[RMDB]
RNA sequence: GGGAACGACUCGAGUAGAGUCGAAAACUGCCGCCGGGACGCAGUGAUCCUCGCAGGGUCGCACGGUCGCCUCGGGUCGCCCUCGUGUCGGCUCGACCUGCGAGGGGAGCGAGUGGCGAGCCCGACCAAAACUUUCUCGCCUUCGGGCGAGAAAGAACUGAAAUAAGGUGUUCGCACCUUAUUUCAGAAAAGAAACAACAACAACAAC
Reactivity to 2A3 in 0.01 (KOAc 150mM, MgCl2 10mM, bicine 150mM(pH8.5), 24C), signal-to-noise 3, nucleotides 027 to 156: c020u020g040c000c020g000c020c000g090g080g080a060c030g000c030a160g170u000g020a020u010c010c000u000c000g010c000a020g040g080g120u130c010g010c030a100c110g030g000u010c020g020c010c000u010c010g010g010g040u070c060g050c010c030c010u040c050g090u100g030u040c020g010g000c040u030c040g040a050c000c000u010g000c000g000a010g000g000g010g000a010g020c000g010a130g050u140g020g000c000g000a040g010c010c000c000g070a050c030c030a030a070a000a090c000u010u000u000c000u020c000g030c010c000u030u050c290g070g000g000c000g000a000g000a000a000a010g000a000a020
Record summary:
Structure probing data (2A3) for a 207-nucleotide construct. The reactions ran in a buffer of 150 mM KOAc, 10 mM MgCl2 and 150 mM bicine (pH 8.5), at 24 C. Values cover nucleotides 27 to 156.